[RMDB]
RNA sequence: GGGAACGACUCGAGUAGAGUCGAAAAUUUGGGGAUUUUGUUACUUUGAGUAAAUUAGAGUGUUCAAAGCAAACAGUUAAAGCAUUUACUGUGUUUGAAUACUAUAGCAUGGAAUAACAAAAUUGAACAAGCUAAAAUUUUUUGUUCUUUUUUCUUACUACGUAUUACGGUUCGCCGUAAUACGUAGAAAAGAAACAACAACAACAAC
Reactivity to 2A3 in 0.01 (KOAc 150mM, MgCl2 10mM, bicine 150mM(pH8.5), 24C), signal-to-noise 1, nucleotides 027 to 156: u070u050u090g030g000g010g000a000u000u020u000u050g000u000u040a040c080u110u000u090g060a050g030u070a100a030a090u090u200a060g000a010g080u000g000u000u020c000a000a000a050g060c020a110a180a050c010a020g020u070u220a100a080a060g110c060a080u040u040u240a010c010u030g000u010g030u020u030u010g010a010a000u010a000c020u050a030u100a070g000c050a030u080g060g050a090a040u040a010a010c020a010a030a030a020u020u020g020a010a010c010a060a040g020c040u060a120a100a300a300u080u100u080u100u130u060g010u000u000c010u140u040u010u010u000u020c000u000u020a040

Annotation
Chemical mapping of a 207-nucleotide RNA with 2A3. High 2A3 reactivity points to a flexible backbone, as in loops and unpaired stretches. The reactions ran in a buffer of 150 mM KOAc, 10 mM MgCl2 and 150 mM bicine (pH 8.5), at 24 C.